Overview:
This 177-nucleotide RNA was probed chemically with 2A3 and DMS. DMS adducts were read by reverse transcription with MarathonRT. The 2A3 profile rests on 9,626 reads. 2A3 adducts were read by reverse transcription with SuperScript II with manganese.
RNA sequence: GGGAACGACUCGAGUAGAGUCGAAAACCCGUGCUCCCCCGUUCUUCCCUGCGGAGUGCGCUGCGCCGCCCAGCCCUGUCGCCCCCCCGGAGGUGAUCCCUCCCUCCUGCCUCCCCGCCAGCCUGACAGAUACUAACGAUUUCGAUCGUUAGUAUCUAAAAGAAACAACAACAACAAC
Reactivity to 2A3 in 0.01 (KOAc 150mM, MgCl2 10mM, bicine 150mM(pH8.5), 24C), signal-to-noise 3, nucleotides 027 to 126: c000c000c000g000u040g020c010u010c020c020c010c000c000g030u060u000c020u040u030c000c010c010u010g020c040g010g020a060g040u090g020c050g020c030u040g010c020g010c000c010g010c000c000c000a000g000c000c000c010u040g030u040c020g020c000c000c000c010c000c000c010g020g010a010g030g020u070g020a060u020c010c000c000u000c000c000c000u000c000c000u020g010c000c000u000c000c020c000c000g000c000c000a020g000c000c000u020g020a020c020
Reactivity to DMS in 0.01 (KOAc 150mM, MgCl2 10mM, bicine 150mM(pH8.5), 24C), signal-to-noise 3, nucleotides 027 to 126: c000c000c010g020u030g010c060u000c010c020c040c010c030g000u000u000c040u010u010c010c000c030u000g000c060g030g000a070g020u000g010c070g020c050u010g000c060g010c040c040g020c040c020c060a100g000c050c030c010u000g010u010c040g000c010c000c000c010c010c020c050g000g000a040g000g010u000g000a120u000c060c000c010u010c050c010c010u000c000c000u010g000c050c030u000c040c020c020c040g020c050c040a060g010c050c010u010g000a160c150